[RMDB]
RNA sequence: GGGAACGACUCGAGUAGAGUCGAAAAUUCUGCUUCCAGCUGGGCUGCUAGGCCAUGACGAGCCUGACUCAGCUCCUGGGCCAGCUCUACCAGCUCUCUCUCCAAGGCCUUCAGCUCUCGGUCCAUACCACCCAGUCAUAUUCGUAUGACUGGGUGGAAAAGAAACAACAACAACAAC
Reactivity to 2A3 in 0.01 (KOAc 150mM, MgCl2 10mM, bicine 150mM(pH8.5), 24C), signal-to-noise 5, nucleotides 027 to 126: u060u020c030u040g050c010u100u060c030c020a030g010c040u060g000g010g010c030u050g020c060u110a100g000g000c020c030a090u150g080a060c120g010a020g010c010c020u040g030a070c030u020c100a020g010c040u030c020c020u070g010g000g020c010c010a020g020c000u020c030u070a130c020c010a030g000c000u020c000u000c000u000c000u000c010c040a100a070g030g000c010c010u040u060c010a020g010c020u000c000u020c050g020g000u000c030c000a050u060a100
Reactivity to DMS in 0.01 (KOAc 150mM, MgCl2 10mM, bicine 150mM(pH8.5), 24C), signal-to-noise 2, nucleotides 027 to 126: u000u000c000u040g030c000u000u000c020c000a130g010c110u030g050g000g010c170u000g010c250u060a120g000g000c050c000a110u020g000a080c250g000a160g040c020c000u000g010a100c050u050c060a210g070c010u000c030c000u020g030g000g000c160c010a120g000c030u000c100u030a070c020c050a010g000c000u000c040u000c000u000c010u000c000c120a120a070g030g000c020c010u020u010c060a130g020c000u000c010u030c000g000g000u000c030c010a110u000a090
About this RNA: The record gives the reactivity of an RNA of 177 nucleotides to 2A3 and DMS. 2A3 adducts were read by reverse transcription with SuperScript II with manganese. Reactivities are given for positions 27 through 126. For 2A3, 6,217 sequencing reads were counted. As a SHAPE reagent, 2A3 marks flexible, mostly unpaired nucleotides at the ribose 2'-OH.